The record gives the reactivity of an RNA of 177 nucleotides to 2A3 and DMS. It was measured as part of the RMDB library OK2TRN. The reactions ran in a buffer of 150 mM KOAc, 10 mM MgCl2 and 150 mM bicine (pH 8.5), at 24 C. For 2A3 the reverse transcriptase was SuperScript II with manganese. The DMS profile rests on 5,102 reads.
RNA sequence: GGGAACGACUCGAGUAGAGUCGAAAAUCGGUAACACCCGAAGCCGGUGGCCCAACCCCUUGCGGGAGGGAGCUGUCGAAGGUGGGACUGGCGAUUGGGACGAAGUCGUAACAAGGUAGCCGUACCGUGUUUACGAUUCAUUCGUGAAUCGUAAACAAAAAGAAACAACAACAACAAC
Reactivity to 2A3 in 0.01 (KOAc 150mM, MgCl2 10mM, bicine 150mM(pH8.5), 24C), signal-to-noise 4, nucleotides 027 to 126: u070c010g020g000u030a040a010c010a030c030c000c000g020a030a010g030c030c020g030g110u070g120g210c000c000c000a100a220c060c010c010c030u100u280g050c250g030g000g020a020g050g000g010a040g010c000u030g010u040c010g030a040a020g030g000u030g000g010g030a020c050u060g030g020c030g040a080u010u080g070g010g000a020c050g050a140a040g130u190c000g020u010a040a020c010a040a020g100g000u030a020g060c040c010g020u030a050c020c000g000
Reactivity to DMS in 0.01 (KOAc 150mM, MgCl2 10mM, bicine 150mM(pH8.5), 24C), signal-to-noise 6, nucleotides 027 to 126: u010c030g010g020u000a070a110c050a070c010c020c020g000a200a260g000c080c030g010g040u000g020g010c000c000c010a090a180c040c000c010c080u010u010g020c160g010g000g010a250g000g010g010a300g010c020u000g010u000c020g000a090a080g010g010u010g000g010g000a020c050u000g010g010c010g000a080u000u010g000g010g010a070c040g010a110a050g010u000c030g000u000a060a040c060a060a050g010g000u000a130g000c070c090g010u000a080c030c020g020